[RMDB]
RNA sequence: GGGAACGACUCGAGUAGAGUCGAAAAUAAUCAAGCAAUCAGUCCUUUAUAUUUUCCUCCUAGUGAGUAUCUGGAAAACAGGUGCAGAAAUGGAUCAUUUGAGACACCGUAGAAAUCUGGUUAAUCCUGCACUCCAAGUAUUCGUACUUGGAGUGCAAAAAGAAACAACAACAACAAC
Reactivity to 2A3 in 0.01 (KOAc 150mM, MgCl2 10mM, bicine 150mM(pH8.5), 24C), signal-to-noise 1, nucleotides 027 to 126: u050a000a030u080c000a000a050g050c010a020a140u120c010a070g010u040c000c000u040u070u010a050u040a000u000u030u000u040c000c000u060c020c020u040a050g050u060g050a020g020u020a030u050c040u020g010g110a000a010a000a120c000a020g000g000u020g070c110a010g130a110a040a050u080g040g020a050u070c050a030u000u040u160g000a010g070a000c010a030c030c000g000u010a050g040a080a030a010u010c010u030g000g000u020u020a000a060u000c000c080
Reactivity to DMS in 0.01 (KOAc 150mM, MgCl2 10mM, bicine 150mM(pH8.5), 24C), signal-to-noise 2, nucleotides 027 to 126: u020a050a010u060c070a040a070g010c110a090a130u050c050a120g010u000c020c050u030u000u000a100u010a080u020u020u000u010c020c040u000c070c070u020a010g020u010g010a040g000u000a040u000c060u000g000g000a040a060a150a110c120a060g000g000u000g000c080a150g010a090a060a040u020g010g030a090u010c020a220u000u000u000g000a110g000a160c070a030c030c020g010u000a060g000a060a060a030u000c020u020g000g030u000u000a090a130u000c010c060
The record gives the reactivity of an RNA of 177 nucleotides to 2A3 and DMS.
For 2A3 the reverse transcriptase was SuperScript II with manganese.
DMS adducts were read by reverse transcription with MarathonRT.
Reactivities are given for positions 27 through 126.
Conditions: 150 mM KOAc, 10 mM MgCl2 and 150 mM bicine (pH 8.5), 24 C.
The data come from the RNA Mapping Database (RMDB), libraries RFM100 and RFMREP.